[RMDB]
RNA sequence: GGGAACGACUCGAGUAGAGUCGAAAAGACAAUAGCGUAGGGAACCAAGCAAAGAGGUAAGAAAUCCCACGGUAGAAGGCAUGGUUCUAGCCGUGGGAAGAAGAAGUCCCACUCCCUACGCCGAUAAUAGAGCAUUAGCUUUCGAGCUAAUGCUCUAAAAAGAAACAACAACAACAAC
Reactivity to DMS in 0.01 (KOAc 150mM, MgCl2 10mM, bicine 150mM(pH8.5), 24C), signal-to-noise 1, nucleotides 027 to 126: g030a200c190a070a150u010a070g010c000g040u000a010g010g000g000a030a060c020c060a120a140g020c160a100a110a150g020a040g010g020u020a100a070g010a060a140a060u020c000c000c010a000c000g000g000u000a030g000a010a010g030g000c210a090u000g000g000u010u010c000u000a060g020c010c000g000u000g030g010g010a000a000g000a000a040g000a080a080g000u000c000c000c000a240c060u000c000c000c000u000a040c020g000c010c120g000a040u010a080a090